Chemical mapping of a 177-nucleotide RNA with DMS and 2A3. In probing experiments dimethyl sulfate is read out at A N1 and C N3, which are open when not base-paired. The RNA was probed in 150 mM KOAc, 10 mM MgCl2 and 150 mM bicine (pH 8.5) at 24 C. The 2A3 profile rests on 2,070 reads. It was measured as part of the RMDB library OK2TST.
RNA sequence: GGGAACGACUCGAGUAGAGUCGAAAAUGCCAGAGAAGUGUCAAUAGUAAACAGAAAUAUCUCCCAAAUGGCUUUGCAAGUUUGGAGACCUUGGGACUAUUAUGAUAUUCUUUUUCCAGGGGUACAAGUCAAAAUAAUAGUUCGCUAUUAUUUUGACAAAAGAAACAACAACAACAAC
Reactivity to DMS in 0.01 (KOAc 150mM, MgCl2 10mM, bicine 150mM(pH8.5), 24C), signal-to-noise 4, nucleotides 027 to 126: u010g020c090c060a110g010a080g010a050a040g010u010g010u000c010a050a030u000a040g010u000a060a090a170c100a050g010a090a100a120u000a090u000c030u000c040c020c060a030a050a060u000g010g010c050u010u000u010g010c060a080a170g000u000u010u000g000g000a050g000a070c110c030u000u000g010g000g000a020c070u000a020u010u000a080u010g000a050u010a080u000u000c010u000u000u010u010u000c010c020a130g000g010g000g020u010a070c240a080a120
Reactivity to 2A3 in 0.01 (KOAc 150mM, MgCl2 10mM, bicine 150mM(pH8.5), 24C), signal-to-noise 2, nucleotides 027 to 126: u080g000c010c030a000g020a020g020a150a040g120u020g020u200c020a010a030u050a070g070u080a070a150a070c020a020g100a040a150a020u120a080u010c040u000c000c000c000a000a050a070u040g000g000c000u050u030u100g080c090a140a120g060u140u210u170g050g000a030g010a050c000c010u030u020g010g020g020a010c040u040a060u190u010a080u150g020a000u010a050u060u050c030u050u070u010u060u010c020c000a030g130g000g010g030u130a040c020a100a070